[RMDB]
RNA sequence: GGGAACGACUCGAGUAGAGUCGAAAAGAUAUGGAGUCCAGGGAGACUAAGUGUCGGAAACGACACGAUGGUCAUCGAUCUGGCUCCUAAGUCAAAACAGGUAUGCAAGUUCGCUUGCAUACCUGAACAUAAACACCAUCUUCGGAUGGUGUUUAUGAAAAGAAACAACAACAACAAC
Reactivity to 2A3 in 0.01 (KOAc 150mM, MgCl2 10mM, bicine 150mM(pH8.5), 24C), signal-to-noise 5, nucleotides 027 to 126: g000a010u010a020u060g000g000a010g050u140c020c010a000g010g000g000a040g000a010c000u020a050a020g000u010g000u000c000g010g030a050a010a000c010g000a000c010a020c010g010a020u240g000g020u010c000a070u300c010g010a020u000c010u000g000g000c000u000c000c000u000a010a000g000u010c020a010a010a100a160c010a000g010g000u010a000u010g000c000a000a010g020u050u120c280g130c170u000u000g000c000a000u000a000c000c000u000g000a000a000
Reactivity to DMS in 0.01 (KOAc 150mM, MgCl2 10mM, bicine 150mM(pH8.5), 24C), signal-to-noise 7, nucleotides 027 to 126: g000a020u000a190u010g000g010a020g000u010c000c000a000g000g010g010a030g010a010c000u010a090a300g000u000g010u000c000g000g000a050a030a110c000g010a010c000a010c000g000a070u010g010g010u000c040a270u000c180g000a050u010c000u000g000g000c000u000c000c000u000a000a060g000u000c020a090a070a120a230c010a000g000g000u000a000u000g000c000a010a000g000u000u010c210g010c000u000u000g000c000a010u000a000c000c000u000g000a020a100